[RMDB]
RNA sequence: GGGAACGACUCGAGUAGAGUCGAAAAACACAACACAAAAAGACAAGAAGAGUCGUGCAAAGGACAGGCUCGACAGAUGCACGACAAAGCGAGCCAUGAAAAGAACAAAGGAAAACAACAAUAGAAACGUCAAGUUCCACUUCGGUGGAGCUUGACGAAAAGAAACAACAACAACAAC
Reactivity to 2A3 in 0.01 (KOAc 150mM, MgCl2 10mM, bicine 150mM(pH8.5), 24C), signal-to-noise 3, nucleotides 027 to 126: a000c110a010c050a090a080c070a010c080a090a100a030a080a000g110a000c050a050a010g070a080a020g030a080g030u000c020g000u000g030c000a070a110a060g090g010a030c090a010g010g000c020u040c010g040a010c020a010g170a060u070g010c000a010c050g000a010c020a030a010a020g020c050g010a000g000c020c000a020u130g030a040a070a000a040g100a040a000c110a040a080a030g090g020a020a130a010a040c130a000a020c020a000a080u010a100g050a000a060a000
Reactivity to DMS in 0.01 (KOAc 150mM, MgCl2 10mM, bicine 150mM(pH8.5), 24C), signal-to-noise 3, nucleotides 027 to 126: a140c060a100c120a020a020c120a130c190a020a060a060a020a060g020a030c160a110a100g010a090a100g000a160g000u000c000g060u000g000c000a050a140a090g010g020a070c160a130g000g010c000u000c060g020a050c050a080g000a120u020g010c010a010c030g020a030c020a010a160a080g010c070g010a030g010c000c020a030u020g000a010a020a020a020g020a050a100c260a030a030a020g010g040a080a000a040a090c220a020a080c150a010a130u110a040g050a090a080a110
This 177-nucleotide RNA was probed chemically with 2A3 and DMS.
For 2A3 the reverse transcriptase was SuperScript II with manganese.
The RNA was probed in 150 mM KOAc, 10 mM MgCl2 and 150 mM bicine (pH 8.5) at 24 C.
DMS adducts were read by reverse transcription with MarathonRT.
The 2A3 profile rests on 3,364 reads.